[RMDB]
RNA sequence: GGGAACGACUCGAGUAGAGUCGAAAAUUCCCUUCUCUCGUCUUCCUCGGUCAACCUCUUAAGUUCCUCUUCUUCCUCCUUGCUGAGGUUCUUCCCUCCUCCGGCAAGCUGCUUCCUUUUGUUCUCGACUUUAAAAUAGGUUCGCCUAUUUUAAAGUAAAAGAAACAACAACAACAAC
Reactivity to 2A3 in 0.01 (KOAc 150mM, MgCl2 10mM, bicine 150mM(pH8.5), 24C), signal-to-noise 3, nucleotides 027 to 126: u010u010c000c000c000u050u020c020u000c000u010c020g050u000c010u060u010c020c010u020c020g050g000u050c050a080a060c020c010u040c010u120u090a110a060g030u070u040c000c010u030c000u050u010c000u040u020c020c000u010c000c000u020u040g000c040u020g030a050g020g000u040u010c020u030u020c020c000c000u000c000c000u010c000c000g010g010c010a030a010g000c010u030g010c000u020u050c000c000u090u130u050u080g020u040u000c030u000c030g030
Reactivity to DMS in 0.01 (KOAc 150mM, MgCl2 10mM, bicine 150mM(pH8.5), 24C), signal-to-noise 8, nucleotides 027 to 126: u000u000c000c000c000u000u000c030u000c020u000c060g010u000c020u000u000c030c010u000c060g010g010u000c060a090a130c050c020u000c040u000u000a080a130g010u010u000c020c010u000c050u000u000c030u000u000c010c010u000c040c020u000u000g010c050u000g010a080g000g010u000u000c060u000u000c030c010c000u000c020c010u000c030c040g020g000c050a040a070g000c060u000g010c050u000u000c020c010u000u000u000u000g010u000u000c030u000c060g010
This 177-nucleotide RNA was probed chemically with 2A3 and DMS. The DMS profile rests on 26,398 reads. As a SHAPE reagent, 2A3 marks flexible, mostly unpaired nucleotides at the ribose 2'-OH.